[RMDB]
RNA sequence: GGGAACGACUCGAGUAGAGUCGAAAACUUCACUUCGGUGAAGGCACAACCUUUGUGGCAUGCAGUAGAAUAUUGUCAGUCUACUGCCCAUUGGGCUGUAGACUUGGAUUUAUAUUCGAACAGUGCCACUCUGGUAUCUGGCUGUCUUCGGACAGAACAGAUGUAAAUACUUCGGUAUUUACAUCUGAAAAGAAACAACAACAACAAC
Reactivity to 2A3 in 0.01 (KOAc 150mM, MgCl2 10mM, bicine 150mM(pH8.5), 24C), signal-to-noise 9, nucleotides 027 to 156: c000u000u000c000a010c010u050u090c300g140g000u010g000a000a000g020g010c080a050c030a140a060c010c000u020u010u010g000u000g000g000c000a000u030g010c010a020g010u010a010g000a000a000u000a000u010u030g010u010c010a000g000u000c000u000a000c000u040g030c000c000c010a300u110u300g000g000g000c010u010g000u000a000g000a000c000u020u110g060g000a010u040u300u080a020u030a000u000u000c000g000a020a010c010a020g010u000g000c000c000a000c000u000c000u000g000g000u050a110u050c080u060g120g000c000u000g010u010c010u030u050c240g100g000a000c000a000g020a100a050
Reactivity to DMS in 0.01 (KOAc 150mM, MgCl2 10mM, bicine 150mM(pH8.5), 24C), signal-to-noise 4, nucleotides 027 to 156: c010u000u000c010a010c000u000u000c300g050g030u000g020a030a010g020g010c110a090c060a170a060c000c010u010u000u000g020u000g010g010c060a040u000g000c030a170g000u000a170g000a040a020u000a020u000u000g000u010c040a060g010u000c000u000a000c000u000g010c010c000c000a200u010u000g040g030g030c010u000g000u000a030g000a010c010u000u000g020g000a040u000u000u000a030u000a030u010u000c010g020a200a240c120a300g010u010g010c010c000a020c010u000c010u000g010g030u000a030u000c050u000g010g000c000u000g000u000c010u010u000c260g040g010a040c010a020g000a300a300